[RMDB]
RNA sequence: GGGAACGACUCGAGUAGAGUCGAAAAAAGACGAGUGAUGAGCUUUGCGUGAAUCUUAAUUUACCCGCAAAUGUCCCAUACUCUCGUGUUAUUUCCAGGAUGGGCUUUAAACUCGAUGCAACAGUUCACUCUUUAGCAAGUUCGCUUGCUAAAGAGUAAAAGAAACAACAACAACAAC
Reactivity to DMS in 0.01 (KOAc 150mM, MgCl2 10mM, bicine 150mM(pH8.5), 24C), signal-to-noise 2, nucleotides 027 to 126: a050a050g010a030c010g010a000g030u000g020a040u000g000a020g000c000u000u000u000g010c010g010u010g000a090a080u000c290u030u010a090a090u010u000u000a090c110c130c000g000c000a000a010a010u000g000u010c010c000c010a030u000a080c020u010c000u000c010g010u000g020u000u010a060u000u000u010c020c070a130g000g020a070u000g020g000g000c030u010u000u000a080a050a090c020u000c070g010a060u010g010c060a030a030c120a080g000u010u000c060
Reactivity to 2A3 in 0.01 (KOAc 150mM, MgCl2 10mM, bicine 150mM(pH8.5), 24C), signal-to-noise 2, nucleotides 027 to 126: a000a010g080a010c010g000a010g000u010g000a020u020g000a000g000c010u000u000u020g000c030g010u050g030a060a030u040c030u090u120a150a150u150u090u110a120c010c000c010g000c000a020a030a030u090g080u160c000c060c010a000u080a170c010u050c000u000c000g000u040g050u040u060a070u020u050u040c010c020a020g080g000a110u140g050g010g020c000u050u040u140a060a000a020c020u030c030g020a050u060g010c060a070a030c010a090g000u050u050c030